[RMDB]
RNA sequence: GGGAACGACUCGAGUAGAGUCGAAAAGGUAUAAUUCACUGAUUGAUUCCAUCAACUCGUUCAAGCACCAGCUCGAAGAAGCGUAGCUAAUUUAUCUUAGAAAAUCAUGGAUUUGAAAAAGCUACGCAUCAUGGGCAAGCUUCGGCUUGCCCAUGAUAAAAGAAACAACAACAACAAC
Reactivity to 2A3 in 0.01 (KOAc 150mM, MgCl2 10mM, bicine 150mM(pH8.5), 24C), signal-to-noise 2, nucleotides 027 to 126: g070g110u000a080u100a100a230u270u010c020a010c040u000g040a040u200u000g040a130u080u010c000c000a050u020c000a030a080c000u010c000g070u020u030c030a070a000g110c030a060c000c000a090g000c000u000c030g110a040a060g090a120a000g090c000g000u040a000g000c000u000a000a000u020u090u160a010u000c000u040u040a010g160a300a170a090a060u130c040a020u190g070g000a030u050u110u300g030a000a000a000a000a000g000c040u050a050c000g000c000
Reactivity to DMS in 0.01 (KOAc 150mM, MgCl2 10mM, bicine 150mM(pH8.5), 24C), signal-to-noise 1, nucleotides 027 to 126: g000g000u000a080u000a020a190u040u030c110a000c050u000g030a250u000u060g000a060u000u020c080c030a300u000c040a070a300c300u000c060g000u010u000c000a040a080g000c010a030c020c050a120g000c000u060c030g070a030a070g030a230a070g060c000g090u010a000g000c000u000a000a130u010u010u000a000u000c000u000u000a300g000a100a070a270a020u040c070a030u020g000g000a050u000u010u070g060a010a000a000a300a020g000c000u000a000c000g030c000